[RMDB]
RNA sequence: GGGAACGACUCGAGUAGAGUCGAAAAGACUCAGAUCCUUCUGUCACUGAGCCAACAAGAAGCCAUUGAGAAACACCUGGAUUUUGACAGCCGCUGUGCUCUGCUAGCACUGUUUGCACAGGCCACGCCCGUUCCUAAGGUUCGCCUUAGGAACGGGAAAAGAAACAACAACAACAAC
Reactivity to 2A3 in 0.01 (KOAc 150mM, MgCl2 10mM, bicine 150mM(pH8.5), 24C), signal-to-noise 1, nucleotides 027 to 126: g030a010c020u000c020a000g030a140u140c060c000u070u060c050u030g040u000c020a020c060u040g030a010g000c010c000a130a030c050a030a010g100a080a040g000c030c020a060u040u090g050a020g040a090a050a000c020a020c000c000u070g030g060a100u080u100u110u100g040a020c020a010g020c030c020g000c080u070g000u020g000c010u070c030u160g080c050u080a010g000c010a050c110u010g080u030u090u130g010c000a040c020a030g000g100c010c000a060c070g030
Reactivity to DMS in 0.01 (KOAc 150mM, MgCl2 10mM, bicine 150mM(pH8.5), 24C), signal-to-noise 1, nucleotides 027 to 126: g010a050c010u000c040a030g010a180u000c050c030u000u000c050u010g030u000c080a110c080u020g000a040g030c030c020a070a100c150a080a070g000a050a130g040c050c070a020u000u020g000a110g020a140a080a070c050a100c060c030u000g000g000a130u000u000u000u000g000a090c050a030g000c040c080g000c050u000g050u000g020c060u000c140u000g000c100u010a060g050c000a110c030u000g000u000u010u000g010c090a070c040a030g020g030c060c010a060c150g000